[RMDB]
Structure probing data (2A3 and DMS) for a 177-nucleotide construct.
Conditions: 150 mM KOAc, 10 mM MgCl2 and 150 mM bicine (pH 8.5), 24 C.
Reactivities are given for positions 27 through 126.
Source: RMDB library OK1LIB, as collected in RNAgym.
RNA sequence: GGGAACGACUCGAGUAGAGUCGAAAAGAGCAGCAAGUCUACGAGCACGUACACGGCCUGAUCGACCGCGGGAUUGCCAGCGGCGAGUUCUAUGAGUGCGACUCGCAUGUGGUGGCGCUGGGGUACAUCCUAGCCCCAGAUUCGUCUGGGGCUAGGAAAAAGAAACAACAACAACAAC
Reactivity to 2A3 in 0.01 (KOAc 150mM, MgCl2 10mM, bicine 150mM(pH8.5), 24C), signal-to-noise 3, nucleotides 027 to 126: g020a000g050c050a000g020c020a070a000g040u000c030u030a060c040g060a000g010c010a010c100g030u090a010c050a010c090g050g000c020c060u080g040a080u030c020g050a080c030c000g030c050g040g000g030a170u090u210g030c010c030a050g020c000g020g030c000g000a000g020u050u000c110u120a180u170g110a080g160u080g030c040g000a020c000u010c010g000c010a070u140g030u050g060g120u040g010g000c010g020c000u000g000g010g000g030u020a010c010a090
Reactivity to DMS in 0.01 (KOAc 150mM, MgCl2 10mM, bicine 150mM(pH8.5), 24C), signal-to-noise 3, nucleotides 027 to 126: g000a080g000c020a070g010c090a060a110g000u020c040u000a140c140g040a070g000c060a070c060g050u000a080c070a120c120g020g010c060c070u010g000a050u020c070g010a080c060c030g020c040g000g020g030a130u030u010g010c040c010a070g000c030g000g000c010g000a040g000u010u020c040u020a110u010g010a170g000u020g000c080g000a060c050u010c000g010c030a060u020g000u020g000g010u010g000g020c060g000c040u000g000g000g000g000u040a050c150a110